RNA sequence: GGGAACGACUCGAGUAGAGUCGAAAAUAACAUCGUAGUGUAAGACGAAAAGUCAUCGUCGCUUGCCAGCAGGACCACCAAAGGAAUACGCUUCGGUAACUACUCGAGAUCCCAAGCGAUAACACAACAUAACCUAAAGUUUCGACUUUAGGUUAUGAAAAGAAACAACAACAACAAC
Reactivity to DMS in 0.01 (KOAc 150mM, MgCl2 10mM, bicine 150mM(pH8.5), 24C), signal-to-noise 8, nucleotides 027 to 126: u020a100a100c100a070u000c050g030u000a060g020u000g010u000a070a110g010a050c020g010a040a080a090a110g010u000c100a060u000c040g020u000c030g010c090u010u000g010c050c030a060g010c060a070g000g010a080c050c050a050c050c070a040a070a100g010g000a090a100u000a070c080g010c090u000u000c020g010g000u000a080a120c010u000a010c000u010c010g000a010g000a130u000c010c000c010a070a080g010c120g010a060u010a050a030c080a050c150a060a110
Reactivity to 2A3 in 0.01 (KOAc 150mM, MgCl2 10mM, bicine 150mM(pH8.5), 24C), signal-to-noise 9, nucleotides 027 to 126: u060a010a020c030a050u060c040g050u050a080g040u020g030u110a090a060g040a030c030g040a100a120a060a050g160u070c050a070u030c060g030u010c000g000c070u030u080g050c020c020a030g010c020a030g020g060a030c020c000a030c010c030a090a060a040g060g020a070a080u070a070c040g010c050u010u020c010g000g030u030a110a110c000u010a000c000u000c000g000a010g000a030u000c000c000c000a000a000g060c040g070a050u100a230a040c060a000c020a180a070
Conditions: 150 mM KOAc, 10 mM MgCl2 and 150 mM bicine (pH 8.5), 24 C.
Structure probing data (DMS and 2A3) for a 177-nucleotide construct.
It was measured as part of the RMDB library M2PK90.
For DMS the reverse transcriptase was MarathonRT.
For 2A3 the reverse transcriptase was SuperScript II with manganese.